Structure probing data (2A3 and DMS) for a 177-nucleotide construct. Conditions: 150 mM KOAc, 10 mM MgCl2 and 150 mM bicine (pH 8.5), 24 C. It was measured as part of the RMDB library M2PK50. For 2A3, 11,589 sequencing reads were counted.
[RMDB]
RNA sequence: GGGAACGACUCGAGUAGAGUCGAAAAGGAGUACUCUUCGGAGUACUCCAGCUACCGAGAAUCUUCCUCGCUAUAUAAAAGAAACCCUUGGAAACAAGGGAAAUACGGCAGGGUUCGCCCUGCCGAACAUUAAACAGUACUUCGGUACUGUUUAAUGAAAAGAAACAACAACAACAAC
Reactivity to 2A3 in 0.01 (KOAc 150mM, MgCl2 10mM, bicine 150mM(pH8.5), 24C), signal-to-noise 5, nucleotides 027 to 126: g000g000a020g040u070a000c000u010c010u080u110c300g040g000a000g000u000a000c000u000c000c000a000g000c000u010a010c000c010g010a000g010a070a140u030c010u000u010c010c010u080c050g020c060u080a080u060a040u070a300a170a040a030g130a110a120a070c000c000c000u000u010g010g000a040a030a020c000a000a000g000g000g000a020a000a000u010a000c000g000g000c010a000g010g010g010u020u050c140g060c020c000c000u000g000c000c000g000a000a000
Reactivity to DMS in 0.01 (KOAc 150mM, MgCl2 10mM, bicine 150mM(pH8.5), 24C), signal-to-noise 6, nucleotides 027 to 126: g010g000a030g020u000a000c000u010c000u000u010c200g030g000a020g020u000a000c010u000c000c000a030g010c010u000a020c020c010g000a040g010a110a120u000c090u000u000c010c010u010c230g020c130u010a070u010a110u010a060a050a090a100g000a120a080a080c000c000c000u000u000g000g010a170a090a200c000a010a010g000g010g000a010a020a100u010a110c010g010g000c010a010g000g000g010u000u010c250g010c000c000c010u000g000c000c000g010a020a040